The data come from the RNA Mapping Database (RMDB), library VIROID. The record gives the reactivity of an RNA of 177 nucleotides to DMS and 2A3. For DMS the reverse transcriptase was MarathonRT. The RNA was probed in 150 mM KOAc, 10 mM MgCl2 and 150 mM bicine (pH 8.5) at 24 C. The DMS profile rests on 1,765 reads.

RNA sequence: GGGAACGACUCGAGUAGAGUCGAAAACGGAGUAGAACGGAAAAAUCACCUCCAGAGGACCCCUUCAGCGAACAGAAGAGCCUUGCCGGGAUAGGAGUAAGACCAUAGCGAUAGGGGGAGAUGCUAGCAAGUGAUGUUAGUUCGCUAACAUCACUUGAAAAGAAACAACAACAACAAC
Reactivity to DMS in 0.01 (KOAc 150mM, MgCl2 10mM, bicine 150mM(pH8.5), 24C), signal-to-noise 3, nucleotides 027 to 126: c080g000g000a060g020u000a070g000a090a120c070g000g000a010a080a070a160a130u010c030a080c090c010u010c020c010a140g010a140g000g000a160c090c030c060c020u000u000c070a090g000c040g000a080a070c050a130g010a060a070g000a120g020c020c010u000u000g020c060c030g000g000g000a090u020a070g010g000a110g020u000a020a060g020a080c050c010a080u000a080g010c060g000a120u010a090g010g010g000g030g010a070g000a040u020g010c060u000a070g030
Reactivity to 2A3 in 0.01 (KOAc 150mM, MgCl2 10mM, bicine 150mM(pH8.5), 24C), signal-to-noise 1, nucleotides 027 to 126: c040g000g030a070g010u150a080g030a120a010c040g000g000a090a010a070a070a030u040c010a040c010c000u020c000c020a020g000a040g110g060a080c010c000c020c000u010u050c080a020g000c000g020a020a020c020a080g120a180a020g030a070g060c010c000u040u040g030c030c040g020g010g040a060u110a100g010g060a090g020u040a020a020g030a020c000c030a040u070a040g020c000g050a100u120a070g000g010g000g000g010a010g000a010u070g020c000u000a010g040